[RMDB]
RNA sequence: GGGAACGACUCGAGUAGAGUCGAAAAGAAAAGUCCGCGAAAGAAAAGGUGCGCAACAAACAAGCGCACCAACGGGGUACAAGACCGAAACCCCGCGAUUCUGUCGAAACAAAACGCGGACAAAGAACCUGAUAUAUACUUUCGAGUAUAUAUCAGGAAAAGAAACAACAACAACAAC
Reactivity to 2A3 in 0.01 (KOAc 150mM, MgCl2 10mM, bicine 150mM(pH8.5), 24C), signal-to-noise 8, nucleotides 027 to 126: g070a000a110a010a010g010u000c000c010g000c000g040a090a080a090g050a020a150a020a010g010g000u010g000c000g010c020a040a130c050a130a300a040c070a180a070g000c000g000c000a000c000c000a000a000c000g000g000g000g000u050a050c070a170a080g080a080c070c050g050a050a060a080c000c000c000c000g000c000g010a020u140u040c050u220g120u070c040g030a060a050a070c040a030a110a020a010c000g000c000g000g000a000c000a000a000a000g030a020a010
Reactivity to DMS in 0.01 (KOAc 150mM, MgCl2 10mM, bicine 150mM(pH8.5), 24C), signal-to-noise 6, nucleotides 027 to 126: g020a110a120a150a140g010u000c010c000g020c000g010a060a070a180g000a080a090a130a100g000g010u000g010c010g020c000a090a110c190a070a120a170c300a110a130g000c000g000c000a010c010c010a010a030c030g010g010g010g020u010a080c130a090a090g030a150c090c070g000a060a090a040c000c010c000c000g010c060g000a040u000u040c090u030g010u010c050g000a140a070a130c140a030a020a060a070c000g010c000g000g000a000c010a010a030a090g000a090a120
Conditions: 150 mM KOAc, 10 mM MgCl2 and 150 mM bicine (pH 8.5), 24 C.
Structure probing data (2A3 and DMS) for a 177-nucleotide construct.
2A3 adducts were read by reverse transcription with SuperScript II with manganese.
The DMS profile rests on 12,539 reads.